[RMDB]
An RNA of 177 nucleotides, treated with DMS and read out base by base.
The RNA was probed in 150 mM KOAc, 10 mM MgCl2 and 150 mM bicine (pH 8.5) at 24 C.
RNA sequence: GGGAACGACUCGAGUAGAGUCGAAAAGGGCGGGGACGGCGACGAGCAGGUCGACUUCCUCCCGGAGGAGGCGGGAGAGCCCUUUGCCCUCGGCUCCGAGCACCAGACAGACCCGCCCGGAGAGAUCCGCACUCACAGAAUUCGUUCUGUGAGUGCGAAAAGAAACAACAACAACAAC
Reactivity to DMS in 0.01 (KOAc 150mM, MgCl2 10mM, bicine 150mM(pH8.5), 24C), signal-to-noise 1, nucleotides 027 to 126: g000g020g010c020g000g010g020g020a140c220g010g010c020g000a100c300g010a050g010c000a280g040g100u010c000g000a160c040u020u010c020c040u000c030c080c050g020g000a010g030g010a020g010g000c080g030g000g000a070g000a040g000c060c100c200u000u010u000g000c100c050c010u000c020g020g000c010u000c010c000g000a300g020c030a110c020c060a100g000a170c060a230g000a260c050c010c020g000c010c030c000g000g010a010g000a120g000a070u000c030